[RMDB]
RNA sequence: GGGAACGACUCGAGUAGAGUCGAAAAGCGGGUCGCCCAGGAAUGGCGGGACCCCACUUCAGCAGGGUCCGCGUUCCAUCCUUUCUUACCUGAUGGCCGGCAUGGUCCCAGCCUCCUCGCUGGCGCCUUGGCUGGAGCUUCGGCUCCAGCAAAAGAAACAACAACAACAAC
Reactivity to 2A3 in 0.01 (KOAc 150mM, MgCl2 10mM, bicine 150mM(pH8.5), 24C), signal-to-noise 6, nucleotides 027 to 129: g090c010g000g000g010u030c010g030c000c000c010a020g020g040a060a030u060g300g150c030g030g030g060a030c000c020c010c000a060c050u300u210c090a080g030c050a050g010g030g000u010c010c010g110c000g010u040u040c000c010a050u040c000c000u100u190u090c040u080u050a140c040c040u050g040a080u100g080g000c000c010g030g020c040a070u070g010g010u040c030c000c020a010g000c000c010u070c010c000u030c050g010c020u010g010g000c020g010c000c010u020u030g080
Reactivity to DMS in 0.01 (KOAc 150mM, MgCl2 10mM, bicine 150mM(pH8.5), 24C), signal-to-noise 5, nucleotides 027 to 129: g040c060g050g010g030u000c070g000c070c020c060a090g000g000a000a000u070g070g080c050g030g030g010a030c000c000c000c000a040c050u060u010c130a150g030c180a240g020g030g050u020c020c050g060c010g020u000u000c050c040a050u070c090c050u000u090u050c060u070u050a100c130c050u060g040a110u050g000g000c120c000g030g120c140a110u070g000g030u060c260c010c010a080g020c000c000u000c070c040u040c030g010c070u030g000g050c090g030c010c020u000u000g050